An RNA of 177 nucleotides, treated with DMS and 2A3 and read out base by base. DMS adducts were read by reverse transcription with MarathonRT. Conditions: 150 mM KOAc, 10 mM MgCl2 and 150 mM bicine (pH 8.5), 24 C.
RNA sequence: GGGAACGACUCGAGUAGAGUCGAAAAAUUGACUCCCUUACGGUUAGUAUGAAGGUUUGAAAGUGAAAGAUUUUUGGUACGUUUCUAGAAAGUAAAUAAAUGAAUCCAAGUUUCAAGCACAUUGUCUCAACUAGAAUACGUUCGCGUAUUCUAGUUGAAAAGAAACAACAACAACAAC
Reactivity to DMS in 0.01 (KOAc 150mM, MgCl2 10mM, bicine 150mM(pH8.5), 24C), signal-to-noise 2, nucleotides 027 to 126: a110u010u000g000a160c080u000c020c000c010u000u000a060c050g020g000u010u000a100g010u010a060u010g020a090a090g010g010u000u000u020g010a060a070a040g010u000g010a090a100a090g000a050u000u000u010u000u010g020g000u000a050c050g000u000u000u000c050u020a170g000a060a060a070g020u000a010a060a040u000a040a060a030u010g000a150a030u000c030c040a040a080g010u000u000u000c020a030a100g000c050a070c080a040u000u010g000u000c090u010
Reactivity to 2A3 in 0.01 (KOAc 150mM, MgCl2 10mM, bicine 150mM(pH8.5), 24C), signal-to-noise 1, nucleotides 027 to 126: a000u070u130g050a040c070u040c020c000c000u000u060a050c030g170g000u040u140a010g040u100a030u100g180a090a050g100g010u000u160u150g020a000a000a060g050u050g060a070a010a030g050a120u030u060u060u050u060g030g000u020a080c070g010u070u030u050c060u000a080g030a130a090a000g110u090a020a030a090u140a070a040a040u060g020a010a010u070c010c020a010a000g080u000u030u010c000a020a010g060c010a010c000a120u030u180g100u060c000u000